[RMDB]
Chemical mapping of a 177-nucleotide RNA with DMS and 2A3.
For 2A3 the reverse transcriptase was SuperScript II with manganese.
The data come from the RNA Mapping Database (RMDB), library TTRDES.
The RNA was probed in 150 mM KOAc, 10 mM MgCl2 and 150 mM bicine (pH 8.5) at 24 C.
In probing experiments dimethyl sulfate is read out at A N1 and C N3, which are open when not base-paired.
RNA sequence: GGGAACGACUCGAGUAGAGUCGAAAAAAAAGAUAUGGACCUGGAGGCCUUGGAUUUAUGGUGCAUGGUAUAUCGGAAACGAUAUAUCUGUGAUGCCAUUGUCAGGCUGACAGGUCCUAAGUCAAAACUUGUUAUCAGGGUUCGCCCUGAUAACAAGAAAAGAAACAACAACAACAAC
Reactivity to DMS in 0.01 (KOAc 150mM, MgCl2 10mM, bicine 150mM(pH8.5), 24C), signal-to-noise 2, nucleotides 027 to 126: a030a090a060a110g000a010u000a300u010g010g000a000c010c000u000g000g000a300g000g010c000c030u020u060g030g000a020u010u010u000a000u000g000g010u010g010c010a010u020g000g020u000a000u000a000u020c000g000g000a100a060a190c000g010a010u000a000u000a000u000c000u000g020u010g020a130u010g000c010c010a020u010u020g020u010c020a030g000g020c010u010g020a300c040a020g000g010u000c000c000u000a000a110g000u000c050a130a040a040a140
Reactivity to 2A3 in 0.01 (KOAc 150mM, MgCl2 10mM, bicine 150mM(pH8.5), 24C), signal-to-noise 1, nucleotides 027 to 126: a000a010a010a010g050a040u090a020u070g000g000a000c000c000u010g020g000a010g040g080c060c040u120u140g170g020a070u300u300u180a020u050g010g010u070g030c030a030u050g010g000u000a000u000a010u000c000g000g000a050a030a050c010g000a010u000a000u000a000u010c050u040g080u020g050a300u090g000c010c000a000u010u000g020u000c000a020g000g000c000u000g030a010c000a000g010g000u010c010c000u000a020a000g040u000c010a010a010a060a090